The record gives the reactivity of an RNA of 207 nucleotides to DMS and 2A3.

RNA sequence: GGGAACGACUCGAGUAGAGUCGAAAACCCACGUUCGCGUGGGCAGGGCCGUAGGGCUCUGUAGGCGACGAAGUGACCUGUAGGGUUCGAAAGAGCCCUAUUUCGAGGUCACAGAGCCUACGAGAGCCCUAAACGGAAACAGCCGAUUCGUCGGCAAACGUUUAUAAGGGUUCGCCCUUAUAAACGUAAAAGAAACAACAACAACAAC
Reactivity to DMS in 0.01 (KOAc 150mM, MgCl2 10mM, bicine 150mM(pH8.5), 24C), signal-to-noise 4, nucleotides 027 to 156: c010c000c010a030c030g020u000u010c180g050c060g020u000g010g030g030c010a060g010g020g020c000c010g030u000a040g020g010g010c000u000c000u000g030u000a010g030g040c000g020a240c130g010a170a200g010u000g010a010c000c000u000g020u000a030g010g020g050u000u000c000g010a180a150a270g000a010g010c000c000c010u000a000u000u000u000c150g010a070g030g010u000c010a010c000a030g000a300g020c010c000u000a010c000g010a050g020a040g010c010c000c010u000a000a010a050c040g020g000a150a080a080c050a170g020c000c010g000a100u000u000c280g020u000c000g000g020c000a030a100
Reactivity to 2A3 in 0.01 (KOAc 150mM, MgCl2 10mM, bicine 150mM(pH8.5), 24C), signal-to-noise 3, nucleotides 027 to 156: c000c000c010a020c000g050u120u130c300g000c010g140u020g010g020g040c070a070g030g130g010c000c000g010u020a020g000g010g000c000u010c010u000g000u010a000g000g000c030g030a300c080g010a300a010g020u010g010a010c000c010u010g010u030a000g000g000g000u010u000c010g030a040a080a050g000a010g010c000c000c000u000a000u000u050u090c080g080a000g000g000u010c030a010c000a000g010a000g000c000c000u010a000c010g120a030g000a010g020c000c000c000u000a000a010a000c000g010g010a040a100a080c060a050g000c010c000g010a010u090u110c250g060u020c040g100g000c020a040a110
The data come from the RNA Mapping Database (RMDB), library RNAMAK. The RNA was probed in 150 mM KOAc, 10 mM MgCl2 and 150 mM bicine (pH 8.5) at 24 C.